Source: RMDB library OK3TST, as collected in RNAgym. Structure probing data (DMS and 2A3) for a 207-nucleotide construct. DMS adducts were read by reverse transcription with MarathonRT. For DMS, 5,368 sequencing reads were counted. Conditions: 150 mM KOAc, 10 mM MgCl2 and 150 mM bicine (pH 8.5), 24 C. For 2A3 the reverse transcriptase was SuperScript II with manganese.

RNA sequence: GGGAACGACUCGAGUAGAGUCGAAAAUUCAGGUGAAACAAUGUUUAAACACUAUUCAUAGUUAACCAGGAGCGUCGAAAUCGCGAUUAAUUGAGGCUCAAUAUCGCCAGCACUAGCAGUCACAAUCGUUACUUCACCUGCCUGGGACUGCGGACAAUCCUUUGAUUAUCUUCGGAUAAUCAAAGGAAAAAGAAACAACAACAACAAC
Reactivity to DMS in 0.01 (KOAc 150mM, MgCl2 10mM, bicine 150mM(pH8.5), 24C), signal-to-noise 3, nucleotides 027 to 156: u000u000c020a080g040g020u000g000a080a070a090c090a060a090u000g010u000u010u000a090a090a140c060a070c040u010a070u000u000c050a070u000a140g030u000u000a060a110c050c000a070g030g010a110g030c060g000u000c050g010a060a110a090u020c060g060c010g000a060u010u000a060a110u000u000g030a150g000g000c020u000c040a070a110u000a080u000c060g010c030c040a120g020c050a090c060u000a080g020c030a050g020u010c030a080c050a070a150u000c010g050u000u000a050c050u000u000c010a020c010c000u010g020c030c000u010g000g000g000a070c020u000g020c020g000g030a070c090a050a150
Reactivity to 2A3 in 0.01 (KOAc 150mM, MgCl2 10mM, bicine 150mM(pH8.5), 24C), signal-to-noise 3, nucleotides 027 to 156: u090u040c020a000g000g010u010g040a020a040a010c040a060a090u110g040u040u190u140a160a110a040c080a030c090u090a060u120u070c030a020u040a120g040u050u070a070a050c000c000a000g010g020a010g010c090g050u060c120g060a030a030a100u080c040g000c000g010a000u090u120a070a110u090u090g060a040g010g050c030u040c050a050a070u110a060u230c060g030c050c010a030g020c020a030c080u060a030g000c020a020g050u050c010a010c030a090a070u050c060g000u040u060a020c010u000u040c000a000c010c000u070g140c020c010u000g000g000g010a010c000u000g000c000g000g010a020c040a030a030